[RMDB]
RNA sequence: GGGAACGACUCGAGUAGAGUCGAAAAGGAAUUAAAACGGGGCGAAGUUGUCUCGCUGCUCGGGCCAUCGGGGAGCGGUAAAACCACCUUACUGCGUGCGGUUGCUGGGCUGGAGAAACCGAGUCAAAUUAUGGCGUAUCUUCGGAUACGCCAUAAUAAAAGAAACAACAACAACAAC
Reactivity to DMS in 0.01 (KOAc 150mM, MgCl2 10mM, bicine 150mM(pH8.5), 24C), signal-to-noise 1, nucleotides 027 to 126: g000g000a130a060u010u010a060a040a110a020c110g030g010g010g000c010g000a130a100g000u000u000g030u000c020u000c000g010c100u000g020c020u000c040g000g020g000c050c030a070u010c020g060g030g000g020a240g010c030g020g000u000a020a020a150a150c130c060a090c100c050u000u000a020c040u000g000c060g010u000g010c070g030g010u000u000g010c030u000g010g020g010c040u000g010g000a090g000a120a020a070c090c040g030a180g000u000c070a040a120
Description: The record gives the reactivity of an RNA of 177 nucleotides to DMS. Conditions: 150 mM KOAc, 10 mM MgCl2 and 150 mM bicine (pH 8.5), 24 C.